[RMDB]
RNA sequence: GGGAACGACUCGAGUAGAGUCGAAAAUACCGUAUUCUCCCCGACGGUUUCAAUCCAUAGCUUCACGUUGUGUAGCGUAGGUGGAAGGUAUCGUGUGGUGUAUAAACACCACAUAGUCUCUUAGGGGUCAAGCUGAUAAACUUCGGUUUAUCAGCAAAGAUAGCUCUGGAUUCGUCCAGAGCUAUCUAAAAGAAACAACAACAACAAC
Reactivity to DMS in 0.01 (KOAc 150mM, MgCl2 10mM, bicine 150mM(pH8.5), 24C), signal-to-noise 1, nucleotides 027 to 156: u000a050c000c030g050u000a040u000u010c050u010c000c010c000c000g040a070c030g010g000u000u000u000c020a110a180u000c020c020a070u020a160g020c030u000u000c020a040c050g000u000u000g000u000g010u040a030g010c030g020u000a050g050g030u010g020g020a040a060g020g080u000a050u010c090g020u000g040u000g040g020u000g000u000a150u000a160a160a140c000a010c000c000a010c010a000u000a050g000u000c040u000c010u000u010a060g000g000g020g020u000c030a070a270g010c000u000g000a030u000a010a030a010c000u000u020c200g070g020u000u000u010a010u010c000a000g030c000a000a000
Reactivity to 2A3 in 0.01 (KOAc 150mM, MgCl2 10mM, bicine 150mM(pH8.5), 24C), signal-to-noise 3, nucleotides 027 to 156: u030a020c000c000g000u010a060u240u100c050u080c030c000c010c000g000a000c020g000g020u020u060u120c040a050a050u000c010c000a040u050a100g000c010u050u060c020a040c070g300u300u300g000u090g020u050a000g010c030g070u110a140g040g080u010g030g000a030a030g070g020u110a050u130c050g020u020g000u000g020g020u000g050u050a080u110a270a200a040c010a000c000c000a000c000a000u000a010g010u010c000u000c000u040u230a010g000g010g010g000u010c070a060a060g000c000u000g000a000u000a000a010a000c000u030u080c160g050g010u010u000u000a000u000c000a000g000c000a000a000